[RMDB]
RNA sequence: GGGAACGACUCGAGUAGAGUCGAAAACUGAGAUAUCAAGAAUUGCCUCCUGUUCAAGAGGAUGAUGAAUCGGAAUACACAACUGACUCUCAAGAAAGCAUCGACCAACCAGGAUCCGACAAUGAACUCGUACUACGGGAUUCGUCCCGUAGUACGAAAAAGAAACAACAACAACAAC
Reactivity to 2A3 in 0.01 (KOAc 150mM, MgCl2 10mM, bicine 150mM(pH8.5), 24C), signal-to-noise 5, nucleotides 027 to 126: c020u060g050a040g050a080u210a040u100c050a130a060g100a130a130u150u110g020c000c010u010c000c020u070g040u090u060c010a040a060g020a020g070g040a010u070g070a020u080g030a010a080u040c010g010g040a030a020u150a040c090a000c020a060a100c030u070g030a090c000u000c000u010c030a000a060g050a050a100a000g070c010a060u040c020g040a020c010c030a030a060c020c020a020g010g030a050u020c020c010g020a060c030a050a060u110g020a050a010c010
Reactivity to DMS in 0.01 (KOAc 150mM, MgCl2 10mM, bicine 150mM(pH8.5), 24C), signal-to-noise 3, nucleotides 027 to 126: c000u000g010a130g010a090u060a010u000c090a040a130g020a080a100u040u010g000c050c000u000c010c020u010g000u000u060c140a090a120g030a020g020g000a070u030g020a050u050g000a030a070u020c040g020g000a080a100u040a050c070a050c060a100a120c110u030g010a100c070u010c010u000c070a040a130g030a170a100a120g020c020a020u020c000g000a100c010c020a060a100c130c040a030g000g000a030u010c000c010g000a020c080a080a070u030g010a010a050c080